[RMDB]
RNA sequence: GGGAACGACUCGAGUAGAGUCGAAAAAUUUCCUUUAACAGGAUAUUGUGAUAGCGUGUCAGUCUUAAAAUUGCGAUGACUAAGUCUAUCGCCAGGUGCAUUGAGCGAUUGGCGGAUGGCGUUAAACGAAUAAAGGGAGCUUCGGCUCCCUUUAUUCAAAAGAAACAACAACAACAAC
Reactivity to DMS in 0.01 (KOAc 150mM, MgCl2 10mM, bicine 150mM(pH8.5), 24C), signal-to-noise 1, nucleotides 027 to 126: a150u000u000u000c000c000u000u000u000a140a110c220a060g010g000a040u000a040u020u010g010u000g000a050u000a070g020c060g010u010g010u000c000a080g010u000c030u010u000a080a060a080a130u020u000g010c060g000a060u010g010a050c050u010a090a120g000u000c010u000a070u000c030g000c010c030a040g040g020u000g000c060a210u010u010g000a140g050c010g000a090u000u000g000g020c020g030g000a060u000g020g000c060g000u010u000a010a090a120c130